[RMDB]
RNA sequence: GGGAACGACUCGAGUAGAGUCGAAAAACAUCGAAGGUAUCGAGGAGUACGUCCCCGAGCCUGCGGUGCUGCGCGGCGCUGUGGCCGCGGGCCUGGGCUUCGCCGGGUUCGUCCUCGGUAAGACGUUCGACGUCUCGUGGAUCGAUCAGGCGGUUGCCUAUUUACUUCGCUUCGGCGAAGUAAAUAGAAAAGAAACAACAACAACAAC
Reactivity to DMS in 0.01 (KOAc 150mM, MgCl2 10mM, bicine 150mM(pH8.5), 24C), signal-to-noise 2, nucleotides 027 to 156: a050c010a020u000c030g020a030a030g030g000u010a060u000c020g010a050g010g000a090g040u010a130c080g000u000c020c010c000c020g020a070g010c000c000u010g020c030g050g030u010g010c020u020g000c050g040c020g000g020c010g010c040u010g020u000g010g020c000c010g030c000g030g010g010c020c020u000g040g020g010c040u000u000c030g020c010c030g010g060g030u010u010c120g030u000c010c020u000c030g030g000u010a050a070g010a030c010g010u000u000c210g020a070c000g010u000c000u000c030g000u000g010g010a030u010c090g000a060u010c020a080g010g000c000g040g010u000u000g020c010
Reactivity to 2A3 in 0.01 (KOAc 150mM, MgCl2 10mM, bicine 150mM(pH8.5), 24C), signal-to-noise 3, nucleotides 027 to 156: a010c000a040u030c010g030a010a000g130g000u100a190u230c010g000a050g020g000a060g050u190a120c060g100u040c030c000c010c000g010a000g020c000c000u040g020c060g020g050u080g050c040u150g100c030g000c010g030g080c020g030c240u220g070u230g160g040c020c000g000c020g010g000g000c000c000u030g000g050g020c020u080u080c020g000c020c020g060g000g000u060u070c020g010u020c000c020u000c030g000g020u040a040a040g000a000c020g020u070u160c210g100a050c010g020u010c010u000c000g020u040g030g030a060u160c070g000a000u030c030a010g010g000c040g090g050u100u080g030c010
Chemical mapping of a 207-nucleotide RNA with DMS and 2A3. For DMS the reverse transcriptase was MarathonRT. DMS (dimethyl sulfate) methylates the pairing face of unpaired adenines and cytosines. Reactivities are given for positions 27 through 156. The RNA was probed in 150 mM KOAc, 10 mM MgCl2 and 150 mM bicine (pH 8.5) at 24 C. The DMS profile rests on 5,858 reads.